[RMDB]
RNA sequence: GGGAACGACUCGAGUAGAGUCGAAAAGAAUGGCAGUUUGUCACUUGCAUCAUUUGAGAGUUUUCUCUUUUGUAUAUUCUCGGCUAUGAGUAUACAUUUUUAUAGCUUAUGCGUGUGACUUUACUGAGGGUCUAUGGUACUUCGGUACCAUAGACCCAAAAGAAACAACAACAACAAC
Reactivity to 2A3 in 0.01 (KOAc 150mM, MgCl2 10mM, bicine 150mM(pH8.5), 24C), signal-to-noise 1, nucleotides 027 to 126: g260a000a300u180g080g000c000a000g000u070u070u000g000u020c040a000c000u000u170g040c000a000u100c020a160u090u170u260g060a000g000a000g020u050u070u200u020c010u000c000u040u140u000u020g080u000a040u040a010u030u010c000u030c040g000g060c090u130a180u220g000a020g040u000a080u000a080c010a090u000u230u060u090u250a180u080a040g040c020u000u020a070u000g000c000g000u000g000u000g010a000c000u000u000u070a000c000u000g000a050
Chemical mapping of a 177-nucleotide RNA with 2A3. For 2A3 the reverse transcriptase was SuperScript II with manganese.